[RMDB]
RNA sequence: GGGAACGACUCGAGUAGAGUCGAAAAGUAGAGGAAAGUACUAUAUAACACAACAUUUGUAAUUGUGUUAUCUGAUAACAAUUAUGGUGAUUGUGUAUUCUCCUCAUAUUGUUUAUUCAAGUAGAAAGAUCAGAUCAGUGUUCGCACUGAUUUGAUCAAAAGAAACAACAACAACAAC
Reactivity to DMS in 0.01 (KOAc 150mM, MgCl2 10mM, bicine 150mM(pH8.5), 24C), signal-to-noise 6, nucleotides 027 to 126: g010u010a070g010a030g000g010a040a030a040g010u020a020c120u030a080u040a070u020a060a050c030a020c000a020a020c060a080u010u020u040g020u030a060a070u000u000g000u000g000u010u000a040u020c210u020g000a110u030a080a030c000a010a010u000u010a030u020g000g010u010g000a070u000u000g000u000g000u000a030u000u000c050u000c000c020u000c010a070u000a070u000u000g000u000u000u010a100u030u010c090a050a120g010u030a090g010a110a080a110
Reactivity to 2A3 in 0.01 (KOAc 150mM, MgCl2 10mM, bicine 150mM(pH8.5), 24C), signal-to-noise 6, nucleotides 027 to 126: g110u120a020g000a020g020g040a070a080a010g080u030a020c070u030a050u060a040u040a190a010c010a000c000a010a010c010a010u060u100u300g050u050a030a020u010u020g020u010g070u150u080a080u090c110u100g070a050u050a130a020c000a000a010u000u000a020u030g050g010u040g040a300u010u010g000u000g010u010a030u060u030c030u000c010c000u000c010a020u040a020u050u030g020u010u040u030a050u030u110c060a100a020g040u070a040g160a110a130a000
The record gives the reactivity of an RNA of 177 nucleotides to DMS and 2A3.
Source: RMDB library OK1LIB, as collected in RNAgym.
The reactions ran in a buffer of 150 mM KOAc, 10 mM MgCl2 and 150 mM bicine (pH 8.5), at 24 C.